Structure probing data (2A3 and DMS) for a 177-nucleotide construct.
RNA sequence: GGGAACGACUCGAGUAGAGUCGAAAACAGUGUAAGGAACCGGCAGUAAAUCAUUAAAAUACCGCGAGUUGCUCGAACUCCAACUUAAAUGUUCAGAGAUAAGUGCUGGCUGAUAGCAGUCGAUUAAGAAGUACGUCCUAUUCGUAGGACGUACUUCAAAAGAAACAACAACAACAAC
Reactivity to 2A3 in 0.01 (KOAc 150mM, MgCl2 10mM, bicine 150mM(pH8.5), 24C), signal-to-noise 1, nucleotides 027 to 126: c020a000g090u100g000u260a110a040g070g010a070a010c040c000g040g030c040a010g010u030a020a200a030u080c030a000u120u120a050a050a150a100u110a000c030c020g020c040g020a060g000u100u120g000c030u020c050g070a040a040c020u070c060c010a060a060c020u100u200a010a230a250u150g020u090u080c020a000g030a020g000a060u100a080a050g050u110g070c070u060g000g030c010u020g000a050u060a040g050c050a030g060u100c050g050a070u040u110a130a050
Reactivity to DMS in 0.01 (KOAc 150mM, MgCl2 10mM, bicine 150mM(pH8.5), 24C), signal-to-noise 2, nucleotides 027 to 126: c040a050g010u000g020u010a020a100g010g000a050a050c030c030g000g000c050a040g000u000a060a140a070u010c050a080u010u010a060a130a100a080u030a110c200c080g020c110g000a050g000u000u010g010c080u000c080g010a050a110c040u000c060c080a060a050c070u000u010a030a080a050u000g000u010u000c120a060g010a110g000a110u010a050a110g000u010g010c010u000g030g000c090u010g000a090u000a050g010c060a040g030u000c040g010a120u010u010a040a160

About this RNA:
Conditions: 150 mM KOAc, 10 mM MgCl2 and 150 mM bicine (pH 8.5), 24 C. 2A3 adducts were read by reverse transcription with SuperScript II with manganese.